[RMDB]
RNA sequence: GGGAACGACUCGAGUAGAGUCGAAAAGAUAUGGACGUAACCCAGCGAUAAGGCUAUGGUCGGAAACGACCAAAGCCUUUUGACGCUGGUUACGUCCUAAGUCAAAACUCGAGCUUCGGCUCGAGAAGUGAUAACUUAACUUCGGUUAAGUUAUCACAAAAGAAACAACAACAACAAC
Reactivity to DMS in 0.01 (KOAc 150mM, MgCl2 10mM, bicine 150mM(pH8.5), 24C), signal-to-noise 6, nucleotides 027 to 126: g010a010u000a150u000g010g000a020c000g010u000a010a010c190c070c080a010g010c010g020a140u010a010a000g010g010c000u000a070u000g010g010u010c010g010g000a030a030a070c000g010a000c000c000a010a050a020g000c000c000u000u000u010u010g020a190c120g020c000u000g000g000u000u000a000c000g010u000c000c000u000a000a050g000u000c010a130a070a130a200c000u000c000g000a020g010c010u000u020c250g050g010c000u000c000g010a010g000a030a080
Reactivity to 2A3 in 0.01 (KOAc 150mM, MgCl2 10mM, bicine 150mM(pH8.5), 24C), signal-to-noise 6, nucleotides 027 to 126: g020a000u030a010u090g010g000a000c010g010u010a000a020c140c260c150a010g000c030g140a200u080a300a000g020g020c010u020a020u050g010g000u010c010g010g010a020a020a020c010g010a000c000c000a000a000a000g000c000c000u000u000u010u050g040a020c040g000c000u000g010g010u000u000a000c000g000u010c000c000u000a000a000g000u000c010a010a020a040a100c010u000c000g000a000g010c010u070u210c300g150g000c000u000c000g000a000g000a010a010
Structure probing data (DMS and 2A3) for a 177-nucleotide construct. Source: RMDB library TTRDES, as collected in RNAgym. The 2A3 profile rests on 26,769 reads. For 2A3 the reverse transcriptase was SuperScript II with manganese. Reactivities are given for positions 27 through 126.